[RMDB]
RNA sequence: GGGAACGACUCGAGUAGAGUCGAAAAGACCAAACAUAGUAAUUUGGUAAAUAAAACAAAGUGAUAGAUAGAUGUAAGUAACUUCAUGCCCUUUAUACAUCUGGAAGUGACUUGGACUUUAAUAUUUAAAUACCACAUUAAACGAGGCAUUUGCGAAGCAGGUAAUUAUGUUCGCAUAAUUACCUGCAAAAGAAACAACAACAACAAC
Reactivity to 2A3 in 0.01 (KOAc 150mM, MgCl2 10mM, bicine 150mM(pH8.5), 24C), signal-to-noise 2, nucleotides 027 to 156: g040a010c000c010a020a020a010c030a110u200a030g100u210a220a170u090u050u010g000g000u030a090a130a060u110a020a070a030a000c080a000a080a010g000u050g060a050u050a080g020a010u030a000g000a010u030g000u040a000a060g060u050a030a030c010u040u060c040a050u060g050c010c000c000u020u070u110a060u000a020c000a020u020c010u020g030g010a050a000g020u010g010a010c020u000u010g050g000a000c000u050u130u090a100a010u130a070u070u100u060a040a030a020u080a020c010c050a040c010a070u130u160a010a020a050c020g030a030g010g010c030a060u110u130u040g040c040g300a060a010
Reactivity to DMS in 0.01 (KOAc 150mM, MgCl2 10mM, bicine 150mM(pH8.5), 24C), signal-to-noise 2, nucleotides 027 to 156: g010a090c010c000a000a040a020c020a100u000a270g000u010a120a050u010u010u000g000g010u030a050a050a140u000a030a120a130a140c060a060a080a120g020u010g020a080u010a040g000a300u000a020g010a080u000g000u000a050a130g020u010a070a100c020u000u010c050a030u020g000c060c000c020u000u000u000a170u000a100c050a050u000c020u000g010g010a070a060g030u000g010a040c100u020u000g030g010a090c090u040u000u000a020a050u010a060u000u010u000a030a000a120u000a060c020c000a050c030a120u000u000a070a050a180c020g000a130g010g010c030a100u000u000u000g020c040g010a130a160
The record gives the reactivity of an RNA of 207 nucleotides to 2A3 and DMS.
The 2A3 profile rests on 952 reads.
2A3 adducts were read by reverse transcription with SuperScript II with manganese.
The data come from the RNA Mapping Database (RMDB), library OK3TST.
The RNA was probed in 150 mM KOAc, 10 mM MgCl2 and 150 mM bicine (pH 8.5) at 24 C.